[RMDB]
The record gives the reactivity of an RNA of 177 nucleotides to DMS and 2A3. The DMS profile rests on 8,162 reads. 2A3 is a SHAPE reagent: it acylates the 2'-hydroxyl of flexible nucleotides of all four kinds. High DMS reactivity at an A or C suggests that its Watson-Crick edge is free. Reactivities are rounded to 0.1 and cut off at 0 and 3. DMS adducts were read by reverse transcription with MarathonRT. For 2A3, 9,628 sequencing reads were counted.

RNA sequence: GGGAACGACUCGAGUAGAGUCGAAAAGAUAUGGAAACACGCUCGCUGGACGAAUUCGGAAACGAACUAUCCAGAACUACGAGACGUGUUUCCUAAGUCAAAACCUAGCAGGUUCGCCUGCUAGGAAUCUAAGAAAGUACUUCGGUACUUUCUUAGAAAAAGAAACAACAACAACAAC
Reactivity to DMS in 0.01 (KOAc 150mM, MgCl2 10mM, bicine 150mM(pH8.5), 24C), signal-to-noise 6, nucleotides 027 to 126: g010a040u010a300u000g000g000a010a000a000c000a000c000g010c010u000c000g000c000u000g000g020a030c110g000a070a160u000u000c000g000g000a120a060a180c000g010a000a020c100u000a240u000c010c000a020g000a110a050c150u010a300c020g000a010g010a070c000g020u000g000u000u000u000c000c000u000a010a070g000u000c020a100a070a120a080c000c000u000a000g000c000a010g000g000u010u020c240g020c010c000u000g010c000u000a000g000g020a020a020
Reactivity to 2A3 in 0.01 (KOAc 150mM, MgCl2 10mM, bicine 150mM(pH8.5), 24C), signal-to-noise 5, nucleotides 027 to 126: g010a000u070a020u130g000g000a010a000a000c010a000c010g020c010u000c010g060c030u020g010g000a010c030g140a220a300u050u010c020g010g030a040a050a040c000g000a010a010c040u030a050u020c000c000a010g050a130a070c190u300a040c070g020a000g170a070c000g000u020g000u000u000u010c000c000u000a010a000g000u000c000a000a050a060a120c010c000u000a000g000c000a000g030g070u100u200c260g110c090c000u010g000c000u000a000g000g000a000a020